Overview: An RNA of 177 nucleotides, treated with 2A3 and DMS and read out base by base. The 2A3 profile rests on 18,283 reads. Source: RMDB library TTRDES, as collected in RNAgym. 2A3 adducts were read by reverse transcription with SuperScript II with manganese.
RNA sequence: GGGAACGACUCGAGUAGAGUCGAAAAGAUAUGGAUGUGUUCUAGUGCCAGACCGAUUCGGAAACGAAUCAGGUCGGUCAACUAGACACAUCCUAAGUCUAAACCAACGUCGUUCGCGACGUUGGAAGUUACUCAUGAUCUUCGGAUCAUGAGUAACAAAAGAAACAACAACAACAAC
Reactivity to 2A3 in 0.01 (KOAc 150mM, MgCl2 10mM, bicine 150mM(pH8.5), 24C), signal-to-noise 5, nucleotides 027 to 126: g020a010u060a030u150g010g000a000u000g010u010g070u270u090c000u000a010g020u000g090c060c100a140g030a000c000c010g000a000u000u000c000g030g060a080a090a120c030g010a020a010u060c130a120g000g000u010c000g000g000u060c040a000a000c000u000a000g000a000c000a010c000a000u000c000c000u000a020a000g000u000c020u030a120a060a110c000c000a000a000c000g000u000c000g010u080u120c300g010c020g180a000c000g010u000u000g010g000a010a000
Reactivity to DMS in 0.01 (KOAc 150mM, MgCl2 10mM, bicine 150mM(pH8.5), 24C), signal-to-noise 5, nucleotides 027 to 126: g010a050u010a300u000g000g000a010u000g000u000g000u010u000c000u000a010g010u000g010c040c010a160g040a010c000c010g010a030u000u000c010g010g000a170a100a230c010g020a000a000u000c010a100g090g010u000c000g000g000u000c080a050a020c010u000a000g000a010c000a000c000a000u000c000c000u000a000a060g000u010c010u000a050a130a280c010c000a000a010c000g010u000c000g030u000u020c280g050c010g020a000c000g010u000u010g000g010a040a070